[RMDB]
The record gives the reactivity of an RNA of 170 nucleotides to 2A3. For 2A3, 77,739 sequencing reads were counted. 2A3 adducts were read by reverse transcription with SuperScript II with manganese. Source: RMDB library 15KLIB, as collected in RNAgym.
RNA sequence: GGGAACGACUCGAGUAGAGUCGAAAAUGUGCAUUCUGAGUUCAAUUUGCCAGGUUGUGAUGGCGGUAGUUUGUAUGUUAACAAGCACGCUUUUCAUACACCAGCAUAUGAUGUGAGUGCAUUCCGUGGAUCCCUUUGUUCGCAAAGGGAAAAAGAAACAACAACAACAAC
Reactivity to 2A3 in 0.01 (KOAc 150mM, MgCl2 10mM, bicine 150mM(pH8.5), 24C), signal-to-noise 9, nucleotides 027 to 129: u220g000u010g000c000a000u000u000c010u070g190a110g200u050u030c050a090a270u030u010u030g010c010c020a070g000g000u000u000g000u000g000a000u010g000g000c050g040g040u110a130g000u030u000u000g070u020a160u140g290u120u150a120a020c000a000a000g000c000a010c020g000c000u180u200u060u020c000a000u000a010c040a000c010c000a010g000c000a000u010a030u060g020a010u030g060u020g080a000g000u000g000c000a010u050u010c020c010g060u130g100g020a110